This 207-nucleotide RNA was probed chemically with DMS. Reactivities are given for positions 27 through 156. Source: RMDB library RSTRND, as collected in RNAgym. For DMS the reverse transcriptase was MarathonRT.
[RMDB]
RNA sequence: GGGAACGACUCGAGUAGAGUCGAAAACAGAACGUUAAACAAUAGGUGACUCGCCUGCCAUCAGCCCGCCAGCUGGCGGUUGUCAGGUUAAAUUAAAGAGCAUGGCUAAGUAUGUAGAACUGUCUGUAGAGGACUUGCGGACGCGGGUUCAACUCCCCAGUACUCAUAAGUUCGCUUAUGAGUACUGAAAAGAAACAACAACAACAAC
Reactivity to DMS in 0.01 (KOAc 150mM, MgCl2 10mM, bicine 150mM(pH8.5), 24C), signal-to-noise 2, nucleotides 027 to 156: c020a110g010a060a180c080g010u010u000a050a060a090c050a090a160u000a080g000g000u010g020a080c010u010c000g020c000c000u000g040c060c000a020u000c010a060g000c060c000c010g040c100c070a210g020c140u000g050g020c060g010g050u010u010g010u000c000a030g020g010u000u000a070a060a130u000u010a050a050a080g030a040g000c010a060u000g020g020c030u000a020a180g020u000a080u010g010u000a120g010a090a080c030u010g010u000c000u000g010u010a100g000a210g020g000a060c030u010u000g020c050g050g030a060c100g020c050g000g010g020u000u000c070a070a120c040u000c020c030c020